[RMDB]
RNA sequence: GGGAACGACUCGAGUAGAGUCGAAAACGAGGAAGGCUUUUUUGUUAUGCUACUAAUACUUGCUCUGCUAUUCUGCCCAAGCCUGGCUGAGGAAGAGUUACGGGGCGUAAAACAAAAAAAUACGCCGACGAGUAAAUCCAUUCGUGGAUUUACUCGUAAAAGAAACAACAACAACAAC
Reactivity to DMS in 0.01 (KOAc 150mM, MgCl2 10mM, bicine 150mM(pH8.5), 24C), signal-to-noise 2, nucleotides 027 to 126: c050g010a120g000g020a150a050g000g010c010u010u000u000u020u010u000g000u000u000a070u020g010c020u020a010c060u010a040a070u020a110c050u000u000g010c010u000c020u020g010c000u000a040u010u010c010u000g020c020c010c030a080a080g010c050c080u000g010g000c010u010g000a050g010g010a060a030g010a300g000u000u010a080c180g010g010g010g010c000g030u000a010a040a040a040c090a040a010a030a050a060a070a120u000a070c130g010c000c000g010
Reactivity to 2A3 in 0.01 (KOAc 150mM, MgCl2 10mM, bicine 150mM(pH8.5), 24C), signal-to-noise 4, nucleotides 027 to 126: c040g020a060g060g090a080a070g030g020c000u110u040u010u010u040u040g050u060u100a120u170g030c020u030a180c020u060a090a060u050a220c030u040u050g080c000u030c010u030g010c010u050a060u130u030c030u050g030c000c020c040a050a010g000c030c020u050g030g000c010u010g030a010g010g050a070a030g010a030g020u030u040a040c070g040g000g040g000c010g010u020a040a110a080a060c090a020a080a010a010a000a020a090u070a020c070g000c000c000g000